[RMDB]
RNA sequence: GGGAACGACUCGAGUAGAGUCGAAAAAAGAUAUGGAAUAGAUGGAGUCCGAUGUCGACGAUGAAACUCAUCGGAAACGAUGAGUGGAGUCGAUGCAUCGGACUAUGAAGUCUAUUCCUAAGUCAAAGUCUCAAGAUGAGUUCGCUCAUCUUGAGACAAAAGAAACAACAACAACAAC
Reactivity to DMS in 0.01 (KOAc 150mM, MgCl2 10mM, bicine 150mM(pH8.5), 24C), signal-to-noise 1, nucleotides 027 to 126: a130a070g000a030u000a300u050g000g010a040a000u000a000g030a110u010g000g000a000g000u000c000c000g000a000u000g030u020c060g070a030c000g050a010u000g000a300a250a000c000u030c000a000u000c000g000g000a160a140a210c000g020a000u000g000a020g000u010g010g000a260g000u000c000g000a090u010g010c030a000u000c010g000g000a010c000u000a050u010g000a070a270g010u000c000u000a010u000u000c000c000u000a000a080g000u010c000a120a100a140

Source information
An RNA of 177 nucleotides, treated with DMS and read out base by base. The data come from the RNA Mapping Database (RMDB), library TTRDES. Values cover nucleotides 27 to 126.